[RMDB]
RNA sequence: GGGAACGACUCGAGUAGAGUCGAAAAGAUAUGGAGAUCUUGUUACCACCAACAGCACCACUCGGAAACGAGUGGUGACAUGGUGAGCAAGAGUCUCCUAAGUCAAACAGCUGUGUUCGCACAGCUGGAUUCUCUUGCAGUUCGCUGCAAGAGAAUCAAAAGAAACAACAACAACAAC
Reactivity to DMS in 0.01 (KOAc 150mM, MgCl2 10mM, bicine 150mM(pH8.5), 24C), signal-to-noise 3, nucleotides 027 to 126: g010a040u010a300u000g020g020a000g010a290u000c000u010u000g000u000u020a200c250c020a000c000c000a020a170c300a180g050c000a010c010c000a000c010u000c000g000g000a150a120a160c000g010a000g010u010g000g010u010g000a010c040a110u000g020g010u000g000a010g020c010a010a000g020a040g020u020c000u000c000c000u000a020a080g010u000c050a090a110a300c000a010g010c010u000g010u000g010u000u000c220g010c000a000c000a000g020c000u000g000
Reactivity to 2A3 in 0.01 (KOAc 150mM, MgCl2 10mM, bicine 150mM(pH8.5), 24C), signal-to-noise 3, nucleotides 027 to 126: g030a020u090a030u180g000g000a020g000a010u000c010u020u030g050u170u260a210c060c020a000c010c010a070a160c080a150g060c000a010c010c000a010c020u010c000g030g050a050a120a070c010g000a010g000u010g000g000u000g030a000c020a010u050g020g000u010g000a000g000c010a000a010g030a030g170u030c000u000c000c000u010a070a010g070u030c050a070a110a180c010a020g000c010u000g000u010g050u140u130c240g060c160a000c010a000g010c000u010g010